[RMDB]
RNA sequence: GGGAACGACUCGAGUAGAGUCGAAAAUCUGCUCUUUUGAGCAGAUCCUAUGUGUGCAUAGGAAACUCCAAUUAACAUUGCAAAGGAGCUAUACACCUUUUAUCUGGUGUAUAGAAAACAUCGUAUGCCAAUUUAUGUAUACGUAUGAGGCAAUGAAGUGGGUGGGCGAGUUCGCUCGCUCGCUCACAAAAGAAACAACAACAACAAC
Reactivity to DMS in 0.01 (KOAc 150mM, MgCl2 10mM, bicine 150mM(pH8.5), 24C), signal-to-noise 4, nucleotides 027 to 156: u000c000u010g020c000u000c000u000u000u000u010g010a050g010c020a020g000a020u000c000c000u000a050u020g020u020g050u000g030c040a060u000a050g020g010a110a060a170c040u000c000c020a120a170u010u000a100a230c010a030u000u010g030c010a070a110a170g010g010a150g010c000u000a010u000a000c000a000c000c000u010u000u000u010a120u020c190u000g010g030u000g020u000a000u000a010g010a050a030a060a160c020a040u000c020g020u010a010u010g010c010c190a120a180u010u000u000a090u030g000u010a000u000a000c030g020u010a020u000g000a230g020g000c010a020a020u000g010a080a170
Reactivity to 2A3 in 0.01 (KOAc 150mM, MgCl2 10mM, bicine 150mM(pH8.5), 24C), signal-to-noise 1, nucleotides 027 to 156: u000c000u010g010c000u010c000u030u260u110u300g000a000g000c000a000g000a000u000c000c000u000a010u000g160u000g060u090g140c010a010u000a000g010g000a010a050a040c020u000c000c000a000a010u040u050a040a020c000a000u000u010g010c010a020a040a070g030g010a020g030c000u000a000u000a000c000a000c000c000u010u030u110u100a220u150c090u070g000g000u000g000u000a000u000a000g000a000a030a000a010c000a010u020c000g000u000a000u000g010c010c020a060a050u070u140u050a150u190g000u000a000u000a000c000g020u040a000u010g020a030g030g020c000a000a000u020g000a130a010